[RMDB]
RNA sequence: GGGAACGACUCGAGUAGAGUCGAAAAGCAGCGCGCGCAGGAUCUGGGGUUCGUCGUCAAUCACCAAGACGAGGGUCAUGGGCGGUCCUCGGGAGCCGCCAGAUCGAUCACCACUGUGAGCCCGCCGUAUCUCCUGGAGAUUCGUCUCCAGGAGAUAAAAAGAAACAACAACAACAAC
Reactivity to 2A3 in 0.01 (KOAc 150mM, MgCl2 10mM, bicine 150mM(pH8.5), 24C), signal-to-noise 2, nucleotides 027 to 126: g000c040a000g020c030g010c010g000c000g020c120a010g100g020a020u000c020u110g000g000g060g020u020u050c010g070u050c030g050u040c150a030a140u170c030a070c090c010a050a080g050a030c000g020a060g090g000g020u020c060a100u170g080g070g080c140g000g040u020c030c020u050c010g090g040g020a010g030c010c040g110c030c000a000g000a010u020c020g000a060u040c010a010c050c020a070c030u030g010u010g060a000g010c020c020c000g030c030c020g010
Reactivity to DMS in 0.01 (KOAc 150mM, MgCl2 10mM, bicine 150mM(pH8.5), 24C), signal-to-noise 3, nucleotides 027 to 126: g010c050a040g020c060g020c140g020c080g030c130a060g000g000a010u010c020u000g000g000g010g020u000u000c020g030u020c040g000u000c110a070a070u000c110a080c080c050a040a100g020a050c050g000a130g020g000g020u000c030a050u000g000g010g000c090g040g000u000c020c110u000c070g030g010g010a050g020c010c000g000c000c000a030g000a000u000c020g000a110u010c040a030c040c020a080c030u020g000u010g000a100g000c030c030c010g010c110c130g000